[RMDB]
RNA sequence: GGGAACGACUCGAGUAGAGUCGAAAAGGACGGCGUCUGCAAGGAUGGAGAACGGUGUGUGCGUGUGCGUGUGCGGCAGCGGCGGGUACGGCGAGGCGUGCGUGCCUGUGGAAGCUCCCGCGCUGCACCGUCACCUCAGUUUCGACUGAGGUGACGGAAAAGAAACAACAACAACAAC
Reactivity to DMS in 0.01 (KOAc 150mM, MgCl2 10mM, bicine 150mM(pH8.5), 24C), signal-to-noise 3, nucleotides 027 to 126: g010g010a080c060g020g010c060g020u000c040u010g010c110a080a120g000g000a070u000g010g010a070g000a080a070c130g000g020u000g020u000g020u010g010c050g010u010g020u010g010c060g010u010g010u000g020c030g000g020c100a030g020c030g020g030c020g000g010g010u010a030c060g000g000c040g000a070g000g020c090g000u000g020c170g020u010g010c020c000u000g030u000g010g000a170a130g000c030u000c170c010c010g020c020g020c000u000g000c030a060
Reactivity to 2A3 in 0.01 (KOAc 150mM, MgCl2 10mM, bicine 150mM(pH8.5), 24C), signal-to-noise 3, nucleotides 027 to 126: g040g000a030c040g020g030c000g040u050c040u050g000c050a050a120g110g040a070u080g040g040a070g030a080a030c040g020g010u040g020u030g030u070g020c010g000u120g020u030g040c040g020u110g020u040g010c080g060g030c040a010g000c020g090g000c030g010g020g000u050a040c050g030g040c010g050a050g150g070c070g040u130g090c040g060u130g000c030c010u050g020u070g110g080a100a070g000c020u040c000c000c000g000c000g000c010u010g000c020a020